[RMDB]
RNA sequence: GGGAACGACUCGAGUAGAGUCGAAAAGGUCGAAGCGCAUCGGCUUCGACGUUGCGGAUGACGGCGAGGAUGCGAACGCCACGACUCUCAUGCACGGCAACGUCAUCAUGGAAGUGGACGAAUGGGAGUGCUCCUAGAGUUUCGACUCUAGGAGCACAAAAGAAACAACAACAACAAC
Reactivity to DMS in 0.01 (KOAc 150mM, MgCl2 10mM, bicine 150mM(pH8.5), 24C), signal-to-noise 3, nucleotides 027 to 126: g010g000u000c010g000a080a030g010c010g020c230a110u000c170g010g010c030u000u000c010g000a010c000g000u010u000g000c110g040g000a080u000g010a050c090g000g020c030g010a110g000g000a090u000g000c060g010a060a070c140g010c020c020a100c030g000a130c020u000c040u000c040a060u000g000c160a070c050g000g000c090a070a150c050g000u000c010a050u010c100a060u010g000g010a090a090g050u000g020g000a070c040g010a100a080u010g000g010g040a140
Reactivity to 2A3 in 0.01 (KOAc 150mM, MgCl2 10mM, bicine 150mM(pH8.5), 24C), signal-to-noise 2, nucleotides 027 to 126: g150g000u000c000g000a010a000g000c040g040c150a190u160c130g140g000c000u030u010c030g000a000c000g020u030u070g040c060g040g120a070u120g030a060c020g030g000c010g010a030g050g010a020u070g030c010g040a070a010c040g010c020c020a030c040g080a050c010u040c010u000c060a030u010g030c120a030c120g040g000c030a060a030c040g040u020c030a060u050c040a000u060g120g000a130a000g060u050g010g050a040c000g040a070a050u080g030g050g000a150
Source: RMDB library OK2TRN, as collected in RNAgym. The record gives the reactivity of an RNA of 177 nucleotides to DMS and 2A3. For 2A3, 1,766 sequencing reads were counted. Values cover nucleotides 27 to 126. Conditions: 150 mM KOAc, 10 mM MgCl2 and 150 mM bicine (pH 8.5), 24 C. For 2A3 the reverse transcriptase was SuperScript II with manganese.